[RMDB]
RNA sequence: GGGAACGACUCGAGUAGAGUCGAAAAUGGUGCCCAUCCUUGGGGCCUGGCUGCAAUUUGACCCCAGGCCCAGGGUCUUCUGCCUUUCAGAGCCCUGGUGCCCUGAGACGGGCAGCCAGGCAAAUCCCAGGCAGGAGGGCCAGUUAGGGCAGGGCCAAUCGUAAUUACCUUUCGAGGUAAUUACGAUAAAAGAAACAACAACAACAAC
Reactivity to 2A3 in 0.01 (KOAc 150mM, MgCl2 10mM, bicine 150mM(pH8.5), 24C), signal-to-noise 2, nucleotides 027 to 156: u090g060g020u130g040c020c010c000a140u030c010c000u030u050g020g030g050g010c000c000u010g010g000c020u040g000c010a140a300u150u130u300g110a240c000c030c000c000a000g000g000c000c000c000a000g000g000g000u040c030u060u000c000u030g040c040c030u180u200u150c050a040g000a020g050c000c010c000u000g010g000u030g030c040c000c000u050g030a070g040a060c090g020g060g000c010a010g060c000c000a000g000g010c000a050a030a000u000c000c000c000a010g010g000c010a000g010g060a030g010g010g000c000c000a050g020u110u190a080g010g040g000c060a030g010g030g020c040c000a010
Reactivity to DMS in 0.01 (KOAc 150mM, MgCl2 10mM, bicine 150mM(pH8.5), 24C), signal-to-noise 1, nucleotides 027 to 156: u010g030g020u010g020c000c010c010a160u000c090c060u000u000g000g030g040g010c010c000u020g000g030c040u000g000c020a120a140u010u010u000g010a150c010c050c020c020a060g010g000c010c010c010a060g020g000g000u000c040u010u000c040u000g010c180c090u000u030u000c070a050g000a180g000c090c000c000u010g000g010u020g010c110c000c010u000g000a100g010a090c100g020g020g000c020a030g030c010c010a010g010g010c020a040a060a090u010c010c010c010a040g020g000c030a060g030g010a110g010g010g020c020c030a100g000u010u000a050g020g000g030c020a090g010g040g000c020c040a120
Notes
Source: RMDB library OK3TST, as collected in RNAgym. An RNA of 207 nucleotides, treated with 2A3 and DMS and read out base by base. For 2A3 the reverse transcriptase was SuperScript II with manganese. For DMS, 3,525 sequencing reads were counted. For DMS the reverse transcriptase was MarathonRT. Values cover nucleotides 27 to 156.